RNA sequence: GGGAACGACUCGAGUAGAGUCGAAAAGAGCCACAGGAAAACGGUUCCAUCAGUUAUGUGGUCAAGCCUGACAAUUCCGUCGAAAUCAGACCUGUGAGCGUGGCCUUGCGUGCUGAUGGCAUGGCCAUAUCAGCACGGUGUUCGCACCGUGCUGAUAAAAAGAAACAACAACAACAAC
Reactivity to 2A3 in 0.01 (KOAc 150mM, MgCl2 10mM, bicine 150mM(pH8.5), 24C), signal-to-noise 5, nucleotides 027 to 126: g070a020g010c000c010a020c010a010g060g050a030a090a030a060c080g030g020u080u060c030c000a030u020c000a010g030u090u190a150u250g200u090g030g040u030c020a010a010g120c020c060u060g030a040c020a080a090u190u050c060c020g040u050c060g140a090a050a080u120c040a050g080a130c000c010u040g020u010g030a100g080c070g020u040g000g020c000c000u020u040g020c020g050u100g030c020u040g020a050u050g020g010c000a000u020g030g000c000c010a010
Reactivity to DMS in 0.01 (KOAc 150mM, MgCl2 10mM, bicine 150mM(pH8.5), 24C), signal-to-noise 7, nucleotides 027 to 126: g000a150g010c010c000a020c020a050g000g000a050a080a100a090c110g010g010u000u000c070c030a060u000c030a040g010u010u010a090u010g020u000g010g010u000c080a080a120g000c090c050u000g010a050c060a080a150u000u010c070c050g020u000c150g010a070a070a090u010c120a100g010a110c030c010u010g000u010g000a080g010c040g020u000g000g010c000c000u000u000g000c020g020u000g010c040u000g000a030u000g000g010c080a040u000g000g010c010c000a080
The data come from the RNA Mapping Database (RMDB), library OK2TST. An RNA of 177 nucleotides, treated with 2A3 and DMS and read out base by base. The 2A3 profile rests on 7,203 reads. For 2A3 the reverse transcriptase was SuperScript II with manganese. For DMS the reverse transcriptase was MarathonRT.